[RMDB]
RNA sequence: GGGAACGACUCGAGUAGAGUCGAAAAGGGCAGUUUUACCGCCUUUGACGACGGAAAGGGAUGCAUAGUAUCCGAGCAUCCAGGAUACGUUCGUCGUUGUAGUUUUUUUAUUAUGGCGGGCUGCCCAGGCCGCAGUCUUCUUCGGGAGGCUGUGGCCAAAAGAAACAACAACAACAAC
Reactivity to DMS in 0.01 (KOAc 150mM, MgCl2 10mM, bicine 150mM(pH8.5), 24C), signal-to-noise 7, nucleotides 027 to 126: g000g010g010c000a000g010u000u010u040u030a120c000c000g000c000c000u020u030u020g020a010c010g000a010c000g010g000a060a150a160g010g010g000a030u010g010c010a090u020a160g030u030a090u030c140c120g000a150g000c000a010u010c010c000a110g010g010a130u020a110c100g000u010u010c000g010u000c000g000u000u000g010u000a040g000u000u000u030u050u060u040u030a070u030u020a060u030g010g020c000g000g000g000c000u000g000c000c000c000a010
Reactivity to 2A3 in 0.01 (KOAc 150mM, MgCl2 10mM, bicine 150mM(pH8.5), 24C), signal-to-noise 9, nucleotides 027 to 126: g000g000g000c010a010g000u010u040u120u170a060c000c000g000c000c000u080u030u130g000a000c000g000a000c000g010g080a050a070a110g160g000g020a020u040g010c010a050u070a200g110u150a170u120c100c050g010a020g000c010a010u010c010c000a010g080g060a080u120a120c060g030u020u040c000g000u000c010g000u000u040g030u010a080g000u020u020u030u040u060u030u060a230u150u060a100u090g000g000c000g000g000g000c000u000g000c000c000c000a000